[RMDB]
RNA sequence: GGGAACGACUCGAGUAGAGUCGAAAAGAAAGAAAGAAAGAAAGGUAUGAAGUCCUAUUCACCCGUGAUAGGAUAAACUUCAUAUUGAUCGUGUAUGUGCUAACGCACAUACACGAAUGCGCAUGCAGAACUGCAUGCAUGAACAUAGCGGGUGCAAUCCACCACCUAAUUUCGAUUAGGUGGUGGAAAAAGAAACAACAACAACAAC
Reactivity to DMS in 0.01 (KOAc 150mM, MgCl2 10mM, bicine 150mM(pH8.5), 24C), signal-to-noise 1, nucleotides 027 to 156: g000a080a070a110g000a150a040a150g000a050a160a110g010a080a150a250g000g000u010a000u000g000a060a020g010u000c000c050u000a020u020u000c030a170c110c020c050g080u030g000a010u000a010g000g000a140u000a130a160a180c000u010u000c000a000u000a040u000u000g000a100u000c000g000u010g030u010a010u000g000u000g060c020u010a140a170c300g040c000a000c010a000u000a070c010a000c000g010a000a000u000g000c080g030c050a000u000g020c030a020g000a060a120c190u010g000c030a100u000g000c010a000u000g000a050a130c130a050u000a040g070c300g040g010g050u000g000c130a030a190
Reactivity to 2A3 in 0.01 (KOAc 150mM, MgCl2 10mM, bicine 150mM(pH8.5), 24C), signal-to-noise 3, nucleotides 027 to 156: g040a010a030a030g060a060a060a020g070a070a090a020g070a030a100a030g020g000u030a000u000g000a000a010g000u020c000c000u000a000u000u020c030a020c000c000c000g000u000g000a000u000a000g030g000a020u090a060a070a020c000u000u000c000a000u000a000u040u080g020a020u030c000g000u000g000u000a000u010g010u010g030c040u130a170a060c190g030c000a000c000a000u010a000c000a000c000g010a000a000u040g030c020g000c000a010u000g000c020a030g070a300a050c210u050g000c000a000u010g010c020a010u110g060a050a030c080a110u110a060g000c010g000g000g000u020g000c040a030a020
An RNA of 207 nucleotides, treated with DMS and 2A3 and read out base by base. For 2A3, 2,176 sequencing reads were counted. For 2A3 the reverse transcriptase was SuperScript II with manganese. Values cover nucleotides 27 to 156.